[RMDB]
RNA sequence: GGGAACGACUCGAGUAGAGUCGAAAACGAUAUGAGGCAUAAUGCCCUACAACGUAGCGGUGUCAUAUAAUUGAGAAGUCUAAAUUUAAGGAUUAGCGUUCUCAAUCAUGCGACACUUUAAUCGCUAGUGCGUUACGUGUUUCGACACGUAACGCACAAAAGAAACAACAACAACAAC
Reactivity to 2A3 in 0.01 (KOAc 150mM, MgCl2 10mM, bicine 150mM(pH8.5), 24C), signal-to-noise 2, nucleotides 027 to 126: c040g010a060u150a010u230g110a160g030g030c020a050u000a160a040u300g000c000c000c000u230a120c020a300a030c060g110u070a000g040c040g010g000u020g000u000c000a040u060a020u000a150a020u000u010g010a000g070a000a000g090u110c000u030a080a010a040u040u110u050a100a050g240g020a080u040u040a000g000c070g190u120u000c000u050c000a000a000u020c030a010u000g010c030g030a000c000a020c000u020u080u030a060a130u010c010g030c080u010a060
The data come from the RNA Mapping Database (RMDB), libraries RFM100 and RFMREP.
This 177-nucleotide RNA was probed chemically with 2A3.
The reactions ran in a buffer of 150 mM KOAc, 10 mM MgCl2 and 150 mM bicine (pH 8.5), at 24 C.
For 2A3 the reverse transcriptase was SuperScript II with manganese.